The record gives the reactivity of an RNA of 207 nucleotides to 2A3 and DMS.

[RMDB]
RNA sequence: GGGAACGACUCGAGUAGAGUCGAAAAGCGGGGCUUGAAACGCGGGUAGCGCGCACGCCGGGCGAAGAAGUUCGCAUACGCGGUGUGCUGGUGCCGAAGUGUCUGCUGCAACGGCACGCUCGACACCUAGAACAUACCGUAUUCGUACGGUAUGUAACACAACACGUUUCUUCGGAAACGUGUUGUGAAAAGAAACAACAACAACAAC
Reactivity to 2A3 in 0.01 (KOAc 150mM, MgCl2 10mM, bicine 150mM(pH8.5), 24C), signal-to-noise 3, nucleotides 027 to 156: g020c030g000g000g030g030c020u080u120g040a000a150a000c040g030c040g010g020g020u070a030g050c020g010c020g000c090a000c000g000c030c000g010g020g000c040g020a020a020g090a100a050g200u030u010c010g000c040a020u100a220c150g000c020g110g020u020g000u010g000c010u020g010g050u040g000c010c010g000a090a030g010u020g010u040c040u060g090c060u050g060c060a040a090c040g010g000c000a000c000g010c040u020c030g000a010c000a020c010c020u040a060g040a110a000c000a000u000a000c000c000g000u000a000u020u100c250g050u010a000c000g000g000u000a000u010g000u000a010a010
Reactivity to DMS in 0.01 (KOAc 150mM, MgCl2 10mM, bicine 150mM(pH8.5), 24C), signal-to-noise 1, nucleotides 027 to 156: g030c050g010g010g030g000c060u000u010g010a040a080a070c060g030c010g000g000g070u000a110g010c010g000c040g000c000a030c010g050c040c000g020g020g010c020g020a050a060g020a220a130g010u000u010c060g050c020a180u010a040c090g020c040g040g030u000g000u010g030c000u000g000g040u000g000c000c000g000a060a120g010u000g020u000c040u000g090c030u000g050c190a060a210c120g020g010c000a040c050g040c070u020c020g000a050c040a010c010c030u000a240g010a070a140c010a000u000a000c010c020g050u000a010u010u000c260g020u000a050c020g020g020u000a000u010g010u000a090a150

Notes: The DMS profile rests on 2,037 reads. DMS (dimethyl sulfate) methylates the pairing face of unpaired adenines and cytosines.